[RMDB]
RNA sequence: GGGAACGACUCGAGUAGAGUCGAAAAUAACAGUGUUCAGGCGUGAAAACGUCUGUUAAUUAGCAAUGACUGUAUGCUAAUUGACUAUUGUGAAAACAAUAGAAUGCUGUUUAACAGUCAUUGAUACGAUCUAGAUGUAUUUCGAUAUGUCUAGAUCAAAAGAAACAACAACAACAAC
Reactivity to DMS in 0.01 (KOAc 150mM, MgCl2 10mM, bicine 150mM(pH8.5), 24C), signal-to-noise 2, nucleotides 027 to 126: u020a000a000c010a000g010u000g010u000u000c000a000g000g000c000g000u000g000a060a050a110a010c000g010u000c010u000g000u000u000a000a000u000u000a000g010c010a040a090u010g000a020c010u000g010u000a140u000g000c000u000a000a000u000u000g000a010c010u000a020u000u000g000u010g000a120a050a120a020c020a000a000u000a000g000a010a000u000g010c000u000g000u000u000u000a190a070c000a000g000u000c000a300u090u050g000a300u090a270c300
Reactivity to 2A3 in 0.01 (KOAc 150mM, MgCl2 10mM, bicine 150mM(pH8.5), 24C), signal-to-noise 4, nucleotides 027 to 126: u100a000a000c000a000g000u000g000u010u000c000a000g000g000c000g000u010g070a060a040a040a010c000g000u000c000u000g000u000u000a000a000u000u000a000g000c000a010a020u080g000a000c000u000g000u010a020u070g000c000u000a000a000u000u000g010a010c000u000a000u000u010g000u010g090a070a070a020a010c000a000a000u000a000g000a000a000u000g000c000u000g000u000u000u020a010a000c000a000g000u000c000a010u030u300g120a080u070a140c180

Source information:
Source: RMDB library OK1LIB, as collected in RNAgym. An RNA of 177 nucleotides, treated with DMS and 2A3 and read out base by base. The RNA was probed in 150 mM KOAc, 10 mM MgCl2 and 150 mM bicine (pH 8.5) at 24 C.